[RMDB]
RNA sequence: GGGAACGACUCGAGUAGAGUCGAAAAAUUGAUCUUGAAGAACCAAGUGGUCAGACUGCUGAUUGGAUGUCAAUAGGGACAUACAUUAUGGGAUUCACAUUACCUAUUGUGUUGAAAGCAUUGUAUAUAAUUACGGGUGGUUCGCCACCCGUAAUUAAAAAGAAACAACAACAACAAC
Reactivity to DMS in 0.01 (KOAc 150mM, MgCl2 10mM, bicine 150mM(pH8.5), 24C), signal-to-noise 2, nucleotides 027 to 126: a050u000u010g010a000u000c070u000u000g030a110a100g000a080a150c100c050a060a080g020u010g010g000u000c070a050g010a130c080u000g010c050u020g000a150u000u000g000g010a050u010g000u010c010a060a100u020a080g030g000g000a060c070a050u010a060c050a060u000u010a060u000g010g000g010a100u000u010c100a030c130a040u010u000a080c030c020u010a070u010u000g010u000g020u000u000g000a110a080a100g010c070a000u010u010g000u010a060u010a100
Structure probing data (DMS) for a 177-nucleotide construct. Source: RMDB library OK2TRN, as collected in RNAgym. The RNA was probed in 150 mM KOAc, 10 mM MgCl2 and 150 mM bicine (pH 8.5) at 24 C. For DMS the reverse transcriptase was MarathonRT. Reactivities are given for positions 27 through 126.